[RMDB]
RNA sequence: GGGAACGACUCGAGUAGAGUCGAAAACAGAAUCACUUCGGUGAUUCUGAAAGAAAGAAGAAAACGCGCGACGACGACCGCGAAAUAAAUAAAUCGUCGUAAAAAUCGAGUCCUUCGGGACUCGAAACAUAAUCAGUCUCUUCGGAGACUGAUUAUGAAAAGAAACAACAACAACAAC
Reactivity to 2A3 in 0.01 (KOAc 150mM, MgCl2 10mM, bicine 150mM(pH8.5), 24C), signal-to-noise 2, nucleotides 027 to 126: c000a000g010a000a000u010c000a000c000u030u160c230g110g000u000g010a000u010u000c010u010g000a010a000a000g080a010a050a010g130a060a010g080a010a150a010a040c000g020c000g000c010g060a040c000g000a010c010g000a000c040c080g000c010g030a110a110a050u110a000a030a020u100a010a030a020u010c010g000u000c000g000u000a020a130a010a000a010u020c010g000a010g000u020c000c010u070u090c160g070g000g000a000c010u000c000g000a010a000a000
Reactivity to DMS in 0.01 (KOAc 150mM, MgCl2 10mM, bicine 150mM(pH8.5), 24C), signal-to-noise 2, nucleotides 027 to 126: c050a000g010a020a000u010c000a030c010u000u020c150g050g040u010g000a000u000u000c000u000g000a050a020a050g050a110a080a120g030a130a190g010a050a070a120a050c020g000c010g020c030g000a050c000g000a010c020g000a010c260c060g030c000g000a040a040a120u000a040a080a050u010a040a170a170u010c010g000u000c000g010u000a010a050a090a130a080u000c000g000a020g000u000c000c000u010u020c240g010g000g020a010c000u000c000g000a000a020a120
Structure probing data (2A3 and DMS) for a 177-nucleotide construct. For 2A3 the reverse transcriptase was SuperScript II with manganese. The 2A3 profile rests on 3,658 reads.